[RMDB]
RNA sequence: GGGAACGACUCGAGUAGAGUCGAAAAGGGGUCGCUCCCGAUGGUAGUGUGGGACAUGCUUGAAGGGACUGAAGCCUCCACGGUCCCGUAGAGCAACAGCCCACACGAGAGUAGGGAGCGACGGAGGCACCCAAAGACAUUCCUUCGGGAAUGUCAAUCGUUACUUGAAGUUCGCUUCAAGUAACGAAAAAGAAACAACAACAACAAC
Reactivity to DMS in 0.01 (KOAc 150mM, MgCl2 10mM, bicine 150mM(pH8.5), 24C), signal-to-noise 1, nucleotides 027 to 156: g030g000g100g020u020c010g030c000u010c000c000c000g010a220u000g020g010u000a140g000u000g010u010g000g010g010a030c020a300u010g040c000u020u000g000a300a300g010g000g010a070c000u000g010a040a100g040c030c040u000c010c040a300c000g000g010u000c000c010c020g010u000a200g010a060g010c000a140a150c050a180g010c000c010c020a010c000a000c020g000a190g000a050g030u000a160g000g000g000a060g000c040g020a000c010g060g020a040g010g030c010a150c010c010c010a090a080a070g000a020c000a020u000u000c000c020u000u010c210g090g030g000a000a000u020g000u010c000a050a070